Structure probing data (DMS and 2A3) for a 177-nucleotide construct. For DMS the reverse transcriptase was MarathonRT. Source: RMDB library OK2TRN, as collected in RNAgym. The RNA was probed in 150 mM KOAc, 10 mM MgCl2 and 150 mM bicine (pH 8.5) at 24 C.

RNA sequence: GGGAACGACUCGAGUAGAGUCGAAAAUGGGCAGGCACGAUCACGUGCUGGAUGCACUGAGGGUGGCCACGCAGACAGAGGGCGUGCGAGGUCUGUUCAGGGGCACAGGAGCGCUGCUCUCCAGGGAAGUGCAUUACGUUUUCGAACGUAAUGCACUAAAAGAAACAACAACAACAAC
Reactivity to DMS in 0.01 (KOAc 150mM, MgCl2 10mM, bicine 150mM(pH8.5), 24C), signal-to-noise 3, nucleotides 027 to 126: u010g010g020g020c050a090g010g000c020a100c040g010a180u010c130a120c070g010u000g000c000u000g010g020a120u010g010c070a060c100u000g010a080g010g000g020u000g020g010c030c040a050c090g010c030a020g000a090c130a110g000a080g030g000g030c050g050u010g000c030g000a130g010g010u000c000u010g010u000u000c080a110g010g020g020g010c230a020c080a100g000g010a060g020c080g010c040u000g010c030u010c010u010c020c020a100g010g000g000a110
Reactivity to 2A3 in 0.01 (KOAc 150mM, MgCl2 10mM, bicine 150mM(pH8.5), 24C), signal-to-noise 2, nucleotides 027 to 126: u110g020g020g000c030a020g020g070c010a010c080g090a110u170c080a030c230g040u020g040c000u010g030g040a070u080g010c040a010c110u060g050a100g080g090g030u160g020g000c030c010a050c010g000c020a020g070a120c020a040g050a090g070g050g010c060g050u030g000c010g030a050g010g070u000c030u030g050u010u070c070a040g040g000g000g010c020a030c020a060g110g020a070g010c120g010c020u040g020c040u000c020u000c010c010a010g010g010g040a120